[RMDB]
RNA sequence: GGGAACGACUCGAGUAGAGUCGAAAACUGGCUGCGGCCGCCACCAGCGACGCCUAUGACGAUGCGCUGCGCAAGAGCCACCAUGCCGGGAUGGACGCGGUGGGCGAUGACGUCGGCACCCCGACCAUACUGAGCAUCCAUUCGUGGAUGCUCAGUAAAAAGAAACAACAACAACAAC
Reactivity to 2A3 in 0.01 (KOAc 150mM, MgCl2 10mM, bicine 150mM(pH8.5), 24C), signal-to-noise 4, nucleotides 027 to 126: c050u060g040g020c030u040g010c020g060g030c000c010g030c030c010a030c010c010a030g020c020g060a050c040g020c020c030u170a180u190g070a110c050g020a040u100g060c050g010c070u040g040c050g010c100a140a020g030a040g060c030c000a040c020c020a020u110g010c010c000g040g000g010a070u100g050g000a010c010g010c030g030g040u060g010g060g000c020g050a070u100g040a040c050g030u050c000g030g010c010a050c020c010c020c010g000a030c000c020a010
Reactivity to DMS in 0.01 (KOAc 150mM, MgCl2 10mM, bicine 150mM(pH8.5), 24C), signal-to-noise 2, nucleotides 027 to 126: c100u000g010g000c010u040g030c020g000g000c020c050g010c080c070a110c060c040a010g000c030g040a130c020g000c030c060u010a140u010g020a060c080g000a030u020g000c060g010c050u000g000c120g040c100a040a110g020a130g000c000c010a140c070c040a090u010g000c020c030g000g000g000a100u020g000g000a090c050g050c140g030g010u000g000g000g030c020g030a090u000g010a060c100g030u010c000g010g000c030a100c030c010c050c000g000a130c000c090a170
The data come from the RNA Mapping Database (RMDB), library OK1LIB. The record gives the reactivity of an RNA of 177 nucleotides to 2A3 and DMS. For 2A3 the reverse transcriptase was SuperScript II with manganese. The RNA was probed in 150 mM KOAc, 10 mM MgCl2 and 150 mM bicine (pH 8.5) at 24 C.